[RMDB]
RNA sequence: GGGAACGACUCGAGUAGAGUCGAAAAGCAGGAAUAAGGUCCUGGACUGAGGAAAAUUGUUCAAAUCUUGUUCGUUUUAUUGAAAAUUAAUUCACAAAUGAGUUUUUCAGUUGAAAAGACGUUUGGAGAUACUAGCAGCUUUCGAGCUGCUAGUAUCAAAAGAAACAACAACAACAAC
Reactivity to DMS in 0.01 (KOAc 150mM, MgCl2 10mM, bicine 150mM(pH8.5), 24C), signal-to-noise 1, nucleotides 027 to 126: g000c060a070g000g000a000a070u010a010a010g010g020u010c020c040u010g000g000a040c040u010g000a060g050g020a020a090a100a050u000u010g000u000u000c090a060a170a030u030c090u000u000g000u000u000c060g010u010u020u010u040a030u010u050g010a000a040a070a070u030u030a080a060u050u010c090a080c060a010a020a080u000g020a090g000u000u000u000u010u000c000a270g010u030u020g020a000a020a020a040g050a080c080g000u000u000u000g030g000a220
Reactivity to 2A3 in 0.01 (KOAc 150mM, MgCl2 10mM, bicine 150mM(pH8.5), 24C), signal-to-noise 2, nucleotides 027 to 126: g050c010a010g000g140a050a020u150a110a010g030g070u000c030c010u030g000g030a030c000u050g040a070g050g110a240a050a070a100u130u050g020u050u050c050a000a030a140u090c010u010u030g020u010u010c030g060u050u100u020u120a170u020u020g000a010a000a020a020u120u120a050a130u110u050c040a030c000a080a080a060u090g020a080g090u010u000u000u000u000c030a070g060u120u160g070a040a040a000a000g040a000c050g020u020u000u000g040g010a120
Record summary: Chemical mapping of a 177-nucleotide RNA with DMS and 2A3. For 2A3 the reverse transcriptase was SuperScript II with manganese. The DMS profile rests on 1,615 reads. Source: RMDB library OK1LIB, as collected in RNAgym.